[RMDB]
RNA sequence: GGGAACGACUCGAGUAGAGUCGAAAAGGGCCAGUACCAAACCCGGGUGAUCGACAUGGCAUCGGCGUAUGCCACGUUGGCCGCGUCCGGUAUCUACCACCCGCCGCAUUUCGUACAGAAGGUGGUCCCUCUGUCAAAAGUUCGCUUUUGACAGAGGAAAAGAAACAACAACAACAAC
Reactivity to DMS in 0.01 (KOAc 150mM, MgCl2 10mM, bicine 150mM(pH8.5), 24C), signal-to-noise 3, nucleotides 027 to 126: g000g000g020c040c070a050g000u030a090c080c080a090a130a130c170c010c020g000g000g000u020g020a100u000c020g010a020c050a060u000g010g020c000a020u020c050g020g040c270g010u030a020u000g000c040c010a010c070g000u000u020g000g000c080c030g000c070g010u030c030c030g000g000u020a060u010c150u040a120c030c040a080c030c020c060g000c020c040g000c050a080u000u030u010c110g000u010a070c110a080g000a120a080g000g000u030g020g010u020c170
Reactivity to 2A3 in 0.01 (KOAc 150mM, MgCl2 10mM, bicine 150mM(pH8.5), 24C), signal-to-noise 9, nucleotides 027 to 126: g030g010g010c040c020a040g050u100a070c030c050a060a030a050c020c000c000g020g010g000u060g020a100u080c030g020a020c020a030u050g010g000c010a010u010c030g270g010c100g080u280a020u030g000c000c000a010c020g020u020u040g030g010c070c020g030c000g070u040c020c010g000g010u030a060u060c040u050a040c000c020a020c010c000c010g010c030c010g060c050a090u060u120u120c070g050u170a090c020a110g080a070a020g110g010u020g010g000u040c010
Chemical mapping of a 177-nucleotide RNA with DMS and 2A3. For 2A3 the reverse transcriptase was SuperScript II with manganese. For DMS, 5,572 sequencing reads were counted. DMS adducts were read by reverse transcription with MarathonRT. The RNA was probed in 150 mM KOAc, 10 mM MgCl2 and 150 mM bicine (pH 8.5) at 24 C.